[RMDB]
RNA sequence: GGGAACGACUCGAGUAGAGUCGAAAAGAUAUGGACGUGGAGCGAUAAGAAGUCCAUCGGAAACGAUGGCUUCUUUUGACGUGACACGUCCUAAGUCAAAAGAGCCUUUAGUUCGCUAAAGGCUCAACAUGAUGUACGGGUUCGCCCGUACAUCAUGAAAAGAAACAACAACAACAAC
Reactivity to DMS in 0.01 (KOAc 150mM, MgCl2 10mM, bicine 150mM(pH8.5), 24C), signal-to-noise 6, nucleotides 027 to 126: g000a050u010a300u000g010g010a000c010g050u000g000g000a300g000c000g010a160u000a030a010g000a020a010g010u020c010c010a010u000c000g010g000a090a080a150c000g010a010u000g000g000c000u000u000c000u000u000u000u000g010a140c050g010u000g000a300c000a000c000g000u010c000c000u000a000a080g010u000c030a090a090a110a140g000a020g010c000c000u000u000u000a010g000u000u010c250g010c000u000a010a010a010g000g000c000u000c000a000a080
Reactivity to 2A3 in 0.01 (KOAc 150mM, MgCl2 10mM, bicine 150mM(pH8.5), 24C), signal-to-noise 2, nucleotides 027 to 126: g020a000u030a020u080g000g000a000c010g000u010g010g010a040g030c030g050a110u070a300a040g010a000a000g040u150c030c010a000u010c010g010g000a040a000a020c010g000a000u000g010g000c000u000u010c000u020u010u000u040g040a010c020g000u010g020a010c000a000c000g010u000c000c000u010a010a000g010u000c010a000a010a040a130g010a000g000c000c000u020u010u000a030g020u040u070c300g000c170u000a000a000a000g000g010c000u000c000a000a010